The record gives the reactivity of an RNA of 177 nucleotides to 2A3 and DMS. The DMS profile rests on 1,246 reads.

RNA sequence: GGGAACGACUCGAGUAGAGUCGAAAACUUCGCCGACGAUCCUGUGAAGGCAUAAGCCGCCAGACCAUAAUUCAGGCGAUUGGCUUCGCUCAGUGCCUCGUCCAGCGCAUCGAACCUGUUCAACAGAACGGUAAUGCAGUUUCGACUGCAUUACCGUAAAAGAAACAACAACAACAAC
Reactivity to 2A3 in 0.01 (KOAc 150mM, MgCl2 10mM, bicine 150mM(pH8.5), 24C), signal-to-noise 2, nucleotides 027 to 126: c020u070u040c010g030c090c030g020a050c020g000a020u020c000c000u050g020u050g210a120a010g000g000c000a030u080a060a020g030c020c020g070c020c030a010g080a130c030c000a070u100a170a100u300u200c080a030g000g040c020g060a040u030u090g010g010c000u060u060c050g040c040u070c080a060g040u020g010c000c030u000c010g040u000c030c010a010g010c040g000c100a010u030c000g010a030a070c010c040u020g030u130u110c080a130a070c010a030g040a070
Reactivity to DMS in 0.01 (KOAc 150mM, MgCl2 10mM, bicine 150mM(pH8.5), 24C), signal-to-noise 2, nucleotides 027 to 126: c230u010u000c020g030c030c030g010a190c070g000a040u000c090c000u000g000u000g020a220a040g010g040c040a090u000a070a120g000c090c140g000c000c030a100g010a200c060c020a070u000a050a130u000u030c140a180g000g010c010g000a130u000u000g010g000c050u000u010c190g010c030u000c050a120g040u000g010c030c060u000c060g020u000c100c010a050g000c140g000c110a060u000c010g000a090a140c120c030u000g000u010u010c120a040a050c100a100g010a090
The reactions ran in a buffer of 150 mM KOAc, 10 mM MgCl2 and 150 mM bicine (pH 8.5), at 24 C.